[RMDB]
RNA sequence: GGGAACGACUCGAGUAGAGUCGAAAAAUUAAUGUGGUGGAAUGUUGGGCUGUACCAGAUGGUUGGGCUUGGUGGGCUAAUUUCUGACUUGCCCUAUCCAAGCUUAGAGUUGGAUCAUGUGGCCCAAUUGAAGAAAUGGACUACUUGAUUCGUAAAGCUGUGAAUAUACCUUCGGGUAUAUUCACAGAAAAGAAACAACAACAACAAC
Reactivity to 2A3 in 0.01 (KOAc 150mM, MgCl2 10mM, bicine 150mM(pH8.5), 24C), signal-to-noise 2, nucleotides 027 to 156: a000u210u140a040a070u130g000u040g020g000u010g000g040a040a120u030g010u040u040g020g000g020c060u040g030u070a080c000c070a010g040a170u090g040g040u050u040g000g010g010c000u010u010g010g000u020g000g000g000c010u010a070a060u170u120u220c110u110g100a090c040u050u080g010c000c020c000u010a070u010c000c010a000a000g000c020u010u050a020g010a010g050u080u070g000g000a010u040c000a000u070g000u000g010g000c000c000c000a030a060u050u050g030a070a060g050a010a060a020u040g000g020a000c000u000a010c000u000u000g020a010u010u030c020g070u080a010a130a060g000
Reactivity to DMS in 0.01 (KOAc 150mM, MgCl2 10mM, bicine 150mM(pH8.5), 24C), signal-to-noise 1, nucleotides 027 to 156: a140u000u000a050a050u000g000u010g000g030u000g000g000a110a040u010g000u000u000g000g030g020c030u000g040u000a100c060c020a120g000a080u010g000g020u000u000g010g000g010c000u000u010g010g000u000g000g020g020c000u000a030a080u000u000u020c160u010g020a080c110u000u000g040c000c000c010u020a130u000c010c000a010a020g000c000u000u000a040g020a100g030u000u000g020g010a030u000c020a050u000g040u000g030g030c000c030c010a020a060u000u020g000a190a190g010a100a050a150u000g020g020a040c000u000a020c000u000u000g000a120u000u000c030g000u000a080a120a130g000
Source: RMDB library ARCHII, as collected in RNAgym. The record gives the reactivity of an RNA of 207 nucleotides to 2A3 and DMS. As a SHAPE reagent, 2A3 marks flexible, mostly unpaired nucleotides at the ribose 2'-OH. DMS adducts were read by reverse transcription with MarathonRT. For 2A3 the reverse transcriptase was SuperScript II with manganese. The RNA was probed in 150 mM KOAc, 10 mM MgCl2 and 150 mM bicine (pH 8.5) at 24 C.